[RMDB]
RNA sequence: GGGAACGACUCGAGUAGAGUCGAAAAGAAACGCAAGGCCGCUGACCGACGGGAUAUUGUGGGGCUUACCACAGGGGACGCGGCGUUAUCACUUGCCUUUUAAGCCGACAGUCUGGGCUGCAUACAAACCACCCAACUAUCUUCGGAUAGUUGGGAACGUAUAGUAGUCGUUCGCGACUACUAUACGAAAAGAAACAACAACAACAAC
Reactivity to 2A3 in 0.01 (KOAc 150mM, MgCl2 10mM, bicine 150mM(pH8.5), 24C), signal-to-noise 4, nucleotides 027 to 156: g020a010a040a000c060g010c020a000a020g130g020c000c000g000c050u070g080a050c010c020g050a080c080g100g020g030a100u150a110u210u110g010u050g000g010g070g080c100u090u140a060c010c000a030c040a050g000g000g000g060a010c040g000c030g020g000c010g010u040u040a040u020c020a010c080u020u020g000c000c020u030u100u020u070a040a010g030c020c020g030a070c030a060g050u020c060u080g040g020g000c000u000g010c000a070u120a100c050a030a070a030c010c050a020c000c000c000a000a000c000u000a000u010c000u020u010c090g060g000a000u000a000g000u000u000g010g000g000a010a000
Reactivity to DMS in 0.01 (KOAc 150mM, MgCl2 10mM, bicine 150mM(pH8.5), 24C), signal-to-noise 2, nucleotides 027 to 156: g010a130a060a050c060g000c030a040a140g010g050c010c010g060c030u000g000a300c010c000g020a140c080g010g000g010a180u000a100u010u010g000u020g000g000g000g000c140u010u010a080c020c030a050c060a120g000g010g010g010a170c100g000c010g000g000c040g050u000u020a120u000c070a170c050u000u000g010c000c010u000u000u000u000a070a150g030c040c010g050a100c010a050g000u000c030u010g000g030g010c020u000g000c030a100u010a120c050a070a090a090c010c030a090c000c000c000a020a020c000u000a020u010c010u010u000c300g040g000a010u000a000g020u000u010g010g020g010a000a010